The record gives the reactivity of an RNA of 207 nucleotides to 2A3.
The data come from the RNA Mapping Database (RMDB), library VIROID.
For 2A3 the reverse transcriptase was SuperScript II with manganese.
The 2A3 profile rests on 1,079 reads.
[RMDB]
RNA sequence: GGGAACGACUCGAGUAGAGUCGAAAAAGCUCAGCUGCCGCUUCUUGUUCUCGAGGGCCUUCCUUCUUCGGUGAUCCUGCCUCUCCUUGUCGGUGAAUCCUCCCCUGAGAGGCCUCUUCCUAGGUCCGGAAUCUACCUCCAUCUGGUCCGUUCGGGCGGAUUAAUGAUGGUUCGCCAUCAUUAAUCCAAAAGAAACAACAACAACAAC
Reactivity to 2A3 in 0.01 (KOAc 150mM, MgCl2 10mM, bicine 150mM(pH8.5), 24C), signal-to-noise 2, nucleotides 027 to 156: a000g030c010u020c040a020g030c020u040g010c000c050g030c040u060u040c000u040u130g050u150u080c070u040c020g050a100g010g040g060c010c020u080u070c030c000u050u130c020u100u100c050g110g020u080g040a060u050c010c020u020g000c000c010u000c010u020c010c040u110u080g150u150c120g000g100u200g150a140a180u140c020c030u020c020c070c000c000u020g060a050g010a010g020g040c000c000u020c000u020u010c000c000u000a010g010g010u040c010c030g010g040a010a020u000c010u050a070c030c000u000c030c010a090u050c040u120g000g010u020c000c010g050u010u020c020g020g000g040c020